The record gives the reactivity of an RNA of 177 nucleotides to 2A3 and DMS.
Reactivities are given for positions 27 through 126.
For 2A3 the reverse transcriptase was SuperScript II with manganese.
RNA sequence: GGGAACGACUCGAGUAGAGUCGAAAAAUAAAGAGCGUAAACGCGUCAUUGAGUGACGUGAAGAUCAUCCAAGUGUGCAGUCUACAGUCGUAGAUAGCGCACAUUACGCUAAGAUGAUCAUAAAAAAUCGUCAGAUGUAGUUCGCUACAUCUGACGAAAAAGAAACAACAACAACAAC
Reactivity to 2A3 in 0.01 (KOAc 150mM, MgCl2 10mM, bicine 150mM(pH8.5), 24C), signal-to-noise 3, nucleotides 027 to 126: a010u200a000a090a040g100a010g000c000g020u040a000a070a080c000g000c000g000u010c010a010u070u300g250a140g200u040g000a000c010g020u000g110a050a010g000a010u020c010a000u010c020c020a130a080g010u040g000u000g000c000a040g050u020c010u010a060c100a230g130u300c130g010u130a020g000a000u030a020g030c030g000c010a010c000a000u010u040a010c000g000c000u010a020a000g000a000u020g010a000u010c030a030u200a010a090a000a000a000a000
Reactivity to DMS in 0.01 (KOAc 150mM, MgCl2 10mM, bicine 150mM(pH8.5), 24C), signal-to-noise 2, nucleotides 027 to 126: a090u020a070a070a020g010a060g010c000g010u000a060a140a130c090g000c000g000u010c010a030u010u000g030a250g000u010g010a000c000g010u000g010a090a070g010a000u000c000a020u000c040c090a030a070g020u000g000u010g000c000a300g030u000c000u010a000c010a180g030u030c300g010u010a010g000a010u000a140g030c020g010c000a000c000a040u000u000a020c030g010c030u000a060a040g000a000u000g000a010u000c030a140u010a010a030a130a000a050a080
Background: For DMS the reverse transcriptase was MarathonRT.